[RMDB]
RNA sequence: GGGAACGACUCGAGUAGAGUCGAAAACAAAUCACGAAGAUGGUAGUGGGAUCCCUGAAAUUUAGGAAAUGAUACUCUAGGAUCCCUGAAAUUUAGGAAAUGAUACUCUAGGACAUGGUUAGAGUGGACAGUGUCCUAAAAGAAGUGCAGAUGAAAAAAUAUACCCGUCAUUCGUGACGGGUAUAUUAAAAGAAACAACAACAACAAC
Reactivity to 2A3 in 0.01 (KOAc 150mM, MgCl2 10mM, bicine 150mM(pH8.5), 24C), signal-to-noise 3, nucleotides 027 to 156: c020a000a040a040u100c050a020c090g100a040a070g050a090u100g070g040u110a110g050u120g020g000g000a000u010c000c000c000u020g050a150a140a120u170u200u120a080g050g030a080a140a020u060g020a050u070a130c030u010c020u050a010g010g000a000u000c000c010c010u020g020a020a060a060u080u150u060a030g020g020a020a040a030u020g010a030u040a080c020u040c030u060a020g030g000a010c010a040u030g050g030u050u010a050g020a040g050u060g020g010a040c010a040g030u020g000u040c000c000u030a060a080a010a000g060a070a010g030u010g050c020a010g020a090u110g090a070a010a030a140
Reactivity to DMS in 0.01 (KOAc 150mM, MgCl2 10mM, bicine 150mM(pH8.5), 24C), signal-to-noise 2, nucleotides 027 to 156: c050a130a100a110u000c040a100c050g020a090a130g000a120u000g000g050u000a070g020u000g010g020g010a060u010c000c000c030u000g010a030a040a130u000u010u010a070g000g000a070a130a100u010g000a160u010a040c150u010c000u000a060g000g010a040u000c010c000c010u000g000a040a070a090u010u000u000a050g010g010a090a060a110u010g000a220u000a040c050u000c010u000a070g010g000a090c040a070u000g000g030u020u010a080g020a110g020u000g010g010a100c090a070g020u000g010u000c000c000u000a010a020a060a090g000a070a100g030u000g000c070a070g020a080u000g000a010a020a110a110

Chemical mapping of a 207-nucleotide RNA with 2A3 and DMS. The 2A3 profile rests on 2,067 reads. DMS (dimethyl sulfate) methylates the pairing face of unpaired adenines and cytosines. For DMS the reverse transcriptase was MarathonRT. For 2A3 the reverse transcriptase was SuperScript II with manganese. Conditions: 150 mM KOAc, 10 mM MgCl2 and 150 mM bicine (pH 8.5), 24 C.